Background
An RNA of 177 nucleotides, treated with 2A3 and DMS and read out base by base. Reactivities are given for positions 27 through 126. DMS adducts were read by reverse transcription with MarathonRT. It was measured as part of the RMDB library OK1LIB.
RNA sequence: GGGAACGACUCGAGUAGAGUCGAAAAGUACCAGUCAAAAUAAUGGCAGCAAUGAUUCCCUCUUCAAGUCGUGGGCAGAUUCAGGGAAUGCAGACUAAUACCCCAAAUAAUGAAGAACUCACGCGUAAAAUCAAUUGAUCUUCGGAUCAAUUGAUUUAAAAGAAACAACAACAACAAC
Reactivity to 2A3 in 0.01 (KOAc 150mM, MgCl2 10mM, bicine 150mM(pH8.5), 24C), signal-to-noise 7, nucleotides 027 to 126: g030u050a060c020c020a020g070u100c070a020a060a050a130u240a140a170u090g050g000c020a030g020c020a080a140u130g040a110u090u060c020c020c000u050c070u130u070c120a200a070g100u100c010g000u050g020g010g010c100a030g020a180u030u030c030a040g020g000g060a030a030u090g050c030a020g020a060c030u050a030a040u150a220c000c000c000c030a030a160a020u200a060a070u190g060a040a040g020a060a040c010u010c020a010c020g060c020g030u100a050
Reactivity to DMS in 0.01 (KOAc 150mM, MgCl2 10mM, bicine 150mM(pH8.5), 24C), signal-to-noise 6, nucleotides 027 to 126: g000u010a100c070c020a100g000u020c110a090a080a080a070u030a120a110u020g020g000c030a060g000c090a070a080u020g000a140u010u010c000c010c010u040c160u020u030c150a060a030g010u040c000g060u010g000g000g000c080a060g010a300u000u010c050a090g000g010g010a080a090u020g010c100a050g000a090c090u010a090a080u040a190c050c000c000c120a030a110a110u030a110a150u010g000a030a030g000a140a070c020u000c000a010c020g000c060g020u020a030